[RMDB]
RNA sequence: GGGAACGACUCGAGUAGAGUCGAAAAACGCUUCACAAUGUGCUGCAAAGAAACAUUGUUUAUGCAAAGGCACUUCGCAAUGUGUGCUCAAACAUUGCUUAUUCAAACACGCUUCACAAUGUGCGACAAAACUUCACGGUCUUCGGACCGUGAAGAACUCAGUUGUCUGCUUCGGCAGACAACUGAGAAAAGAAACAACAACAACAAC
Reactivity to 2A3 in 0.01 (KOAc 150mM, MgCl2 10mM, bicine 150mM(pH8.5), 24C), signal-to-noise 1, nucleotides 027 to 156: a000c060g010c000u050u070c030a030c000a000a060u000g000u000g000c030u050g000c000a120a120a080g050a010a190a000c000a000u000u000g100u050u010u160a100u200g020c030a020a020a060g130g000c000a000c000u020u070c070g000c000a000a030u010g010u000g090u030g020c080u120c220a040a070a040c010a010u000u010g000c000u060u180a170u180u080c040a000a050a030c090a010c090g010c020u150u100c010a000c020a240a300u200g000u030g000c020g060a040c120a010a090a050a010c010u000u000c000a010c010g010g010u010c030u000u070c050g060g000a000c000c000g000u000g000a000a000g000a000a000